Conditions: 150 mM KOAc, 10 mM MgCl2 and 150 mM bicine (pH 8.5), 24 C. The record gives the reactivity of an RNA of 177 nucleotides to DMS and 2A3. In probing experiments dimethyl sulfate is read out at A N1 and C N3, which are open when not base-paired.
[RMDB]
RNA sequence: GGGAACGACUCGAGUAGAGUCGAAAAAGCCAGCAUCAGUUGAAUCCGAAUUACAAGAAACAACGGAGUUGAUUAAAUUUAUUCAUACCGAAUCAACUGGUCGUUUCGAGCGUAGACUUAGCCGUGACAUGCAGGCGAUAUUCGUAUCGCCUGCAUGAAAAGAAACAACAACAACAAC
Reactivity to DMS in 0.01 (KOAc 150mM, MgCl2 10mM, bicine 150mM(pH8.5), 24C), signal-to-noise 1, nucleotides 027 to 126: a120g000c040c030a030g030c030a040u000c090a030g010u000u000g000a030a070u030c000c000g020a030a150u000u020a080c080a080a170g010a060a050a020c020a050a100c050g020g050a010g000u000u000g000a050u000u000a010a110a020u060u020u020a100u050u010c220a120u040a210c080c240g000a020a010u000c000a020a000c000u000g010g020u000c130g000u000u000u000c040g000a190g040c000g000u030a010g000a020c070u000u000a070g000c000c060g010u030g000a150
Reactivity to 2A3 in 0.01 (KOAc 150mM, MgCl2 10mM, bicine 150mM(pH8.5), 24C), signal-to-noise 2, nucleotides 027 to 126: a010g000c000c000a000g050c000a030u000c010a000g000u010u040g030a000a000u100c060c010g030a150a050u130u070a090c040a070a090g060a070a060a030c070a040a000c040g010g020a040g020u000u080g040a070u040u100a280a030a140u240u300u160a160u130u040c030a010u090a190c000c050g060a000a020u080c000a000a000c000u000g010g010u010c040g030u000u000u070c010g010a000g030c000g000u100a020g040a080c000u040u040a000g000c000c010g010u020g060a010